Source: RMDB libraries RFM100 and RFMREP, as collected in RNAgym.
Structure probing data (DMS and 2A3) for a 177-nucleotide construct.
For DMS the reverse transcriptase was MarathonRT.
The RNA was probed in 150 mM KOAc, 10 mM MgCl2 and 150 mM bicine (pH 8.5) at 24 C.
[RMDB]
RNA sequence: GGGAACGACUCGAGUAGAGUCGAAAACUAAUCUUAUUUUUAACGUUUGAAAUUGAUAUUUCAAAUCAUACAAAAUAGGAUUAGUCUGCCCAUUUUCUAUAUACGUAAGCGCUAUUUCUGAAGAAUAGCUAUUACAACAAUUCGUUGUUGUAAUAGCAAAAGAAACAACAACAACAAC
Reactivity to DMS in 0.01 (KOAc 150mM, MgCl2 10mM, bicine 150mM(pH8.5), 24C), signal-to-noise 5, nucleotides 027 to 126: c000u000a000a000u000c000u000u000a000u000u000u010u000u000a080a280c290g000u000u010u000g000a000a010a010u000u000g010a160u040a110u000u010u000c000a000a000a010u000c050a110u020a160c210a010a000a010a010u000a010g000g010a010u000u000a010g000u000c030u010g030c000c000c000a170u020u010u010u010c070u010a040u020a070u020a050c090g010u010a090a080g010c090g010c080u000a060u000u000u000c040u010g020a090a090g010a070a070u010a090
Reactivity to 2A3 in 0.01 (KOAc 150mM, MgCl2 10mM, bicine 150mM(pH8.5), 24C), signal-to-noise 9, nucleotides 027 to 126: c000u000a000a000u000c000u000u000a010u010u010u000u010u050a060a020c030g000u000u000u000g010a010a010a010u110u160g140a080u160a050u300u010u000c000a000a010a010u090c020a020u040a120c060a030a000a000a000u000a000g000g000a000u000u000a000g000u000c010u020g010c000c000c010a000u040u040u030u020c030u030a100u020a040u020a200c060g070u060a060a100g060c030g010c100u040a070u060u120u020c060u100g120a120a060g050a150a090u060a090